The record gives the reactivity of an RNA of 207 nucleotides to 2A3 and DMS. For 2A3 the reverse transcriptase was SuperScript II with manganese. Reactivities are rounded to 0.1 and cut off at 0 and 3. Values cover nucleotides 27 to 156. The 2A3 profile rests on 2,882 reads. Conditions: 150 mM KOAc, 10 mM MgCl2 and 150 mM bicine (pH 8.5), 24 C.
RNA sequence: GGGAACGACUCGAGUAGAGUCGAAAAUUUUAGUUGCAGAAGAAAACUUUGCACUGGCCGCCUAAUUACAGGUAGCCCGGACUGAUGGGGAUCGCCGAUGUCGCCUGAAUGUCCGUCACAAUGUCGGAUCGUGGCCCGUCUUACUCAAGACGCGGGUGAACUAAUAAUUGUUCGCAAUUAUUAGUUCAAAAGAAACAACAACAACAAC
Reactivity to 2A3 in 0.01 (KOAc 150mM, MgCl2 10mM, bicine 150mM(pH8.5), 24C), signal-to-noise 5, nucleotides 027 to 156: u090u090u030u120a050g020u050u050g000c020a000g020a150a010g070a050a250a120a130c100u110u070u060g020c040a040c060u030g000g030c010c010g010c020c010u150a280a180u200u200a120c100a100g000g020u020a010g010c000c020c000g000g010a010c000u040g000a040u060g010g010g000g010a000u020c030g030c080c010g030a030u030g030u020c020g090c130c000u040g060a060a030u080g010u000c000c010g010u030c010a060c030a070a110u260g040u070c030g010g010a040u100c090g070u090g060g030c020c010c010g000u000c020u030u080a160c070u100c120a040a020g030a010c050g000c120g030g000g040u050
Reactivity to DMS in 0.01 (KOAc 150mM, MgCl2 10mM, bicine 150mM(pH8.5), 24C), signal-to-noise 2, nucleotides 027 to 156: u000u020u000u010a110g030u000u000g000c030a120g020a110a130g000a130a120a070a080c060u000u000u020g020c020a100c090u010g040g000c000c000g050c030c010u000a060a170u010u000a080c200a020g030g030u000a010g000c000c000c020g000g000a080c000u000g010a190u030g030g010g030g000a070u000c080g020c080c070g050a120u000g050u000c000g000c000c020u000g000a180a060u000g000u000c010c020g010u000c110a090c100a060a050u010g010u000c030g010g020a110u000c050g010u000g010g010c000c000c000g000u000c010u030u000a120c180u020c130a070a050g020a060c030g000c090g000g000g010u000